An RNA of 177 nucleotides, treated with 2A3 and DMS and read out base by base. The DMS profile rests on 1,116 reads. Conditions: 150 mM KOAc, 10 mM MgCl2 and 150 mM bicine (pH 8.5), 24 C. Values are in units of 0.01, from 0 to 300, in steps of 10.

RNA sequence: GGGAACGACUCGAGUAGAGUCGAAAAAUUGCAAUUACCUUCAUCGUUACAGACCCGCCUGACACAGUGGAGUAAUAGCCAACGUGGCGGCUCACUGGCCGGUGUAUUUGCGAUGGGUGCACUGGCAGUCGUAGGUGCUAUUCGUAGCACCUACGACAAAAGAAACAACAACAACAAC
Reactivity to 2A3 in 0.01 (KOAc 150mM, MgCl2 10mM, bicine 150mM(pH8.5), 24C), signal-to-noise 2, nucleotides 027 to 126: a000u110u100g000c040a030a060u080u030a100c020c000u040u000c000a020u000c010g060u000u070a080c060a040g080a050c040c020c020g000c040c050u100g060a060c040a000c000a160g000u040g100g090a020g000u090a150a200u100a110g020c040c020a140a100c230g120u060g000g000c010g000g010c000u020c000a020c010u020g060g000c010c000g010g000u010g010u030a040u040u030u080g050c010g020a080u130g030g000g000u000g030c010a000c020u010g030g020c040a070
Reactivity to DMS in 0.01 (KOAc 150mM, MgCl2 10mM, bicine 150mM(pH8.5), 24C), signal-to-noise 1, nucleotides 027 to 126: a090u000u000g000c080a040a010u000u000a040c060c060u020u000c040a030u000c010g010u020u020a200c100a140g000a100c050c040c010g020c020c050u010g010a080c130a220c040a060g000u000g000g010a050g030u000a060a040u020a260g000c010c010a130a050c090g000u000g040g030c010g000g020c010u000c050a040c080u000g030g000c010c010g010g000u010g040u040a050u000u000u000g020c050g000a090u000g000g010g030u000g000c020a000c000u000g010g010c020a120